[RMDB]
RNA sequence: GGGAACGACUCGAGUAGAGUCGAAAAAUAGGCUUAUCAAGCGAGGUGGAGGGACUGGCCCGAUGAAACCCGGGAGCCAGAAAUGGUGCCAAUUCCUGCAGCGGAAACGUUGAAAGAUGAGCCGAUGCCAGGGGACAGUUCGCUGUCCCCAAAAGAAACAACAACAACAAC
Reactivity to DMS in 0.01 (KOAc 150mM, MgCl2 10mM, bicine 150mM(pH8.5), 24C), signal-to-noise 2, nucleotides 027 to 129: a160u050a060g020g000c060u040u000a000u010c060a130a140g060c000g020a100g020g010u050g010g030a140g000g010g000a000c000u050g030g010c150c050c020g000a060u050g020a160a130a150c150c130c000g000g060g000a120g040c050c040a160g030a090a100a070u030g030g030u050g010c120c000a050a070u050u030c000c080u000g030c050a000g040c060g070g020a070a120a100c030g000u010u010g000a140a060a120g030a020u000g080a010g000c100c050g020a030u010g050c050c110a000
Reactivity to 2A3 in 0.01 (KOAc 150mM, MgCl2 10mM, bicine 150mM(pH8.5), 24C), signal-to-noise 2, nucleotides 027 to 129: a050u140a050g000g000c010u050u010a020u050c000a090a010g040c000g080a070g120g100u030g030g090a140g000g020g000a030c000u000g010g020c000c000c000g080a090u140g080a050a090a030c060c000c000g010g020g000a000g030c000c000a010g000a000a060a010u040g000g000u030g000c000c000a000a010u060u010c000c000u030g080c000a030g020c060g030g000a040a080a090c000g030u020u020g050a150a090a010g030a000u010g020a010g000c020c000g020a040u170g050c030c010a020